[RMDB]
Record summary:
This 177-nucleotide RNA was probed chemically with 2A3 and DMS. Reactivities are given for positions 27 through 126. The 2A3 profile rests on 7,801 reads. The DMS profile rests on 4,558 reads.

RNA sequence: GGGAACGACUCGAGUAGAGUCGAAAAGAUAUGGACUCUGGGCAACAGCAACAGCUAGCUCGGAAACGAGCUAGACAUGCUGACCCAGGAGUCCUAAGUCAAACACCUAGGGUUCGCCCUAGGUGAAGAUGGUUAAUUGGUUCGCCAAUUAACCAUCAAAAGAAACAACAACAACAAC
Reactivity to 2A3 in 0.01 (KOAc 150mM, MgCl2 10mM, bicine 150mM(pH8.5), 24C), signal-to-noise 5, nucleotides 027 to 126: g010a020u070a050u110g010g000a010c000u020c000u020g020g080g030c050a190a040c000a110g030c010a020a120c020a140g030c030u010a010g000c000u000c000g010g010a070a080a020c010g000a000g020c000u000a000g020a010c000a020u050g010c000u210g300a300c010c000c000a010g010g020a010g000u000c000c000u020a060a000g030u020c070a080a100a050c000a010c000c000u000a000g010g000g060u030u060c300g220c000c000c000u010a000g000g000u000g000a000a000
Reactivity to DMS in 0.01 (KOAc 150mM, MgCl2 10mM, bicine 150mM(pH8.5), 24C), signal-to-noise 4, nucleotides 027 to 126: g010a060u010a300u010g000g010a010c010u000c000u000g000g000g000c010a050a020c020a010g000c010a050a110c300a200g000c000u000a010g000c000u000c000g000g000a100a080a230c000g030a010g010c000u000a000g000a010c110a120u000g000c010u000g020a150c000c000c000a050g020g000a010g000u000c000c000u000a010a080g000u000c070a100a140a300c010a010c000c000u000a020g000g000g020u000u020c300g000c000c000c000u000a000g000g000u000g000a020a030
2A3 is a SHAPE reagent: it acylates the 2'-hydroxyl of flexible nucleotides of all four kinds.